[RMDB]
RNA sequence: GGGAACGACUCGAGUAGAGUCGAAAAGCUGGAAGUCAGAGGCCUCCCAGGAAGCCCCAGGGCCCCUCUUCACCCUGCUGGUCUAUCCGUGGCACCUCCCACCAAGUGAAAGCGGCUUCCCCAUCCCCCUGCGAUUUACUUUCGAGUAAAUCGCAGGAAAAGAAACAACAACAACAAC
Reactivity to DMS in 0.01 (KOAc 150mM, MgCl2 10mM, bicine 150mM(pH8.5), 24C), signal-to-noise 1, nucleotides 027 to 126: g000c120u020g010g030a010a070g000u000c020a140g000a090g000g010c040c000u020c040c010c080a080g010g010a000a060g000c070c030c170c000a100g000g000g000c110c010c040c040u000c070u000u010c090a270c010c000c010u000g010c130u000g000g000u030c080u010a170u000c000c030g060u000g000g080c170a240c040c010u020c000c140c070a050c050c070a040a150g020u090g030a110a060a170g020c100g010g000c070u000u000c000c000c140c030a100u000c050c000c000
Reactivity to 2A3 in 0.01 (KOAc 150mM, MgCl2 10mM, bicine 150mM(pH8.5), 24C), signal-to-noise 2, nucleotides 027 to 126: g110c120u060g000g030a030a000g100u080c050a080g000a010g050g030c030c010u080c020c020c000a020g010g040a010a000g000c000c000c000c000a000g000g010g000c010c040c010c010u020c020u080u110c040a020c000c030c000u020g030c060u110g010g000u050c010u060a220u000c030c070g080u060g000g000c060a000c030c010u020c010c000c010a050c020c060a140a050g040u070g120a090a050a000g130c050g010g010c000u010u010c030c010c000c000a140u010c020c000c000

This 177-nucleotide RNA was probed chemically with DMS and 2A3. For DMS the reverse transcriptase was MarathonRT. For DMS, 1,088 sequencing reads were counted. The RNA was probed in 150 mM KOAc, 10 mM MgCl2 and 150 mM bicine (pH 8.5) at 24 C. Values cover nucleotides 27 to 126.